[RMDB]
RNA sequence: GGGAACGACUCGAGUAGAGUCGAAAACCCCCAAGUUUCGACUUGGGGGAAUUAAAAUCAGCGGUAAAUAAUUAGCACGCGUUACCGCUGAACGCGAGCAUAGAGCAAUGCGCUUCGGCGCAUUGAACAUCACGUUUGAGUUCGCUCAAACGUGAUGAAAAGAAACAACAACAACAAC
Reactivity to 2A3 in 0.01 (KOAc 150mM, MgCl2 10mM, bicine 150mM(pH8.5), 24C), signal-to-noise 2, nucleotides 027 to 126: c000c000c000c000c000a010a010g000u040u050u160c180g110a010c000u000u000g010g000g020g000g040a000a010u130u140a030a040a010a080u010c010a000g010c010g130g240u220a030a110a060u060a030a120u160u110a070g010c020a010c030g020c010g010u000u000a090c000c000g000c000u000g020a000a010c020g030c010g030a020g020c050a090u080a130g080a030g090c000a000a020u010g000c030g000c000u020u050c230g060g000c030g000c000a000u000u010g000a010a020
Reactivity to DMS in 0.01 (KOAc 150mM, MgCl2 10mM, bicine 150mM(pH8.5), 24C), signal-to-noise 1, nucleotides 027 to 126: c000c000c000c000c000a000a010g010u010u000u000c150g000a040c010u000u000g000g030g020g000g000a010a000u010u000a040a060a090a110u000c000a000g000c000g020g000u000a010a100a030u020a060a040u000u000a160g020c050a060c060g020c030g010u000u000a040c040c000g010c010u000g010a000a020c040g010c010g010a080g030c020a220u010a120g000a140g000c010a000a000u000g000c010g020c010u000u010c190g000g000c000g020c000a000u000u010g010a050a200

Background: The data come from the RNA Mapping Database (RMDB), library M2PK50. The record gives the reactivity of an RNA of 177 nucleotides to 2A3 and DMS. The DMS profile rests on 1,415 reads. The reactions ran in a buffer of 150 mM KOAc, 10 mM MgCl2 and 150 mM bicine (pH 8.5), at 24 C.